[RMDB]
The record gives the reactivity of an RNA of 177 nucleotides to 2A3 and DMS. For DMS the reverse transcriptase was MarathonRT. The RNA was probed in 150 mM KOAc, 10 mM MgCl2 and 150 mM bicine (pH 8.5) at 24 C. Values cover nucleotides 27 to 126. For 2A3, 2,314 sequencing reads were counted. The DMS profile rests on 3,103 reads.
RNA sequence: GGGAACGACUCGAGUAGAGUCGAAAAGGAGUCGGCGUUGUGCUGGAUGAGGGCUGCGGUGAGGGUAGUCCGCUCGGGCAGCGGGAUGAGGUACAUCCGCACGAGGCCGUAGGCGAGGAAGAGCGCAACUACACGGACAGUUCGCUGUCCGUGUAGUAAAAGAAACAACAACAACAAC
Reactivity to 2A3 in 0.01 (KOAc 150mM, MgCl2 10mM, bicine 150mM(pH8.5), 24C), signal-to-noise 2, nucleotides 027 to 126: g110g000a030g110u060c010g020g000c190g140u030u050g040u040g030c120u230g020g020a020u010g020a050g050g120g020c080u050g000c020g160g110u120g060a090g000g060g000u040a060g110u040c020c050g080c030u040c000g060g070g000c030a030g000c030g050g000g030a130u180g050a030g050g070u110a030c000a010u000c020c000g010c010a010c010g000a010g050g000c000c010g010u000a000g010g030c030g020a030g040g040a130a020g030a050g060c030g000c040a040
Reactivity to DMS in 0.01 (KOAc 150mM, MgCl2 10mM, bicine 150mM(pH8.5), 24C), signal-to-noise 2, nucleotides 027 to 126: g010g000a160g020u010c010g020g010c020g000u000u000g020u000g020c010u000g030g010a030u010g000a200g000g000g020c040u000g010c010g000g030u010g020a070g000g000g010u010a120g010u010c110c020g000c030u010c020g020g000g000c060a050g010c020g000g000g010a110u000g000a100g000g010u000a140c030a020u010c000c010g010c010a010c040g010a040g010g020c000c020g020u000a000g010g010c020g000a060g010g010a070a040g010a070g010c020g020c060a070